[RMDB]
RNA sequence: GGGAACGACUCGAGUAGAGUCGAAAAGAUAUGGACGUUCGAACUACUUGAGUGCUAAGGCGGAAGCUUACCCUUUCGGAAACGAAAGGGUAAGUGGACUUAGCCCUCAAGCGAACGUCCUAAGUCAGAUAGUAGAGAAGUUCGCUUCUCUACUAUCAAAAGAAACAACAACAACAAC
Reactivity to DMS in 0.01 (KOAc 150mM, MgCl2 10mM, bicine 150mM(pH8.5), 24C), signal-to-noise 5, nucleotides 027 to 126: g010a040u000a260u010g010g000a030c010g030u000u000c010g010a050a050c100u030a300c010u000u000g010a010g020u000g010c000u000a000a010g010g020c170g030g010a160a220g010c000u000u000a010c000c000c000u000u000u000c000g000g000a070a040a130c000g010a010a010a010g000g000g010u000a000a000g010u000g000g000a080c000u000u000a010g000c000c050c000u000c000a010a000g010c010g000a010a010c010g020u000c000c000u000a000a040g000u010c020a190
Reactivity to 2A3 in 0.01 (KOAc 150mM, MgCl2 10mM, bicine 150mM(pH8.5), 24C), signal-to-noise 4, nucleotides 027 to 126: g020a020u060a030u150g000g010a000c010g010u000u010c020g010a090a050c090u200a020c000u300u000g010a000g000u020g020c000u000a010a010g130g070c300g300g240a200a030g000c010u000u000a000c000c010c000u010u010u000c010g000g000a040a040a040c000g010a030a000a000g090g010g010u010a000a020g000u000g000g000a010c000u000u000a000g000c000c030c010u000c000a000a000g010c000g010a000a000c000g000u010c000c000u000a000a000g010u010c000a020